This 177-nucleotide RNA was probed chemically with DMS and 2A3.
RNA sequence: GGGAACGACUCGAGUAGAGUCGAAAAGUGGUCGAGUGCGAAGCACUGGGGUAGAGAAAUAAAGAGAAAGAGAACUUCCCCGUCAGUCAGUCACUCUCUGUCUGAAUCUCUCUCUCAAAGACCACGACAGUAGUGGAUUAUUCGUAAUCCACUACUGAAAAGAAACAACAACAACAAC
Reactivity to DMS in 0.01 (KOAc 150mM, MgCl2 10mM, bicine 150mM(pH8.5), 24C), signal-to-noise 9, nucleotides 027 to 126: g020u000g000g010u000c000g010a040g020u000g010c010g010a160a130g020c010a000c010u000g010g000g000g000u020a030g010a010g010a030a060a050u030a070a170a040g000a030g000a040a080a030g000a030g010a120a100c140u010u010c010c010c020c100g010u020c110a060g000u010c080a060g010u020c110a130c080u010c020u000c020u000g000u000c020u000g000a160a090u000c050u000c000u000c010u000c000u000c040a040a080a090g000a010c000c000a000c000g010a180
Reactivity to 2A3 in 0.01 (KOAc 150mM, MgCl2 10mM, bicine 150mM(pH8.5), 24C), signal-to-noise 9, nucleotides 027 to 126: g010u000g010g000u010c010g030a020g010u010g020c140g230a210a060g020c010a000c010u020g010g000g030g030u150a010g020a010g060a050a120a040u220a070a170a010g080a010g050a050a160a000g070a010g010a050a040c020u050u040c010c000c000c010g060u040c010a010g010u010c000a010g020u030c030a050c110u050c010u000c010u020g040u030c010u010g050a110a100u020c000u000c000u000c000u000c000u000c030a060a060a020g000a000c000c000a000c000g010a000
Annotation:
DMS adducts were read by reverse transcription with MarathonRT.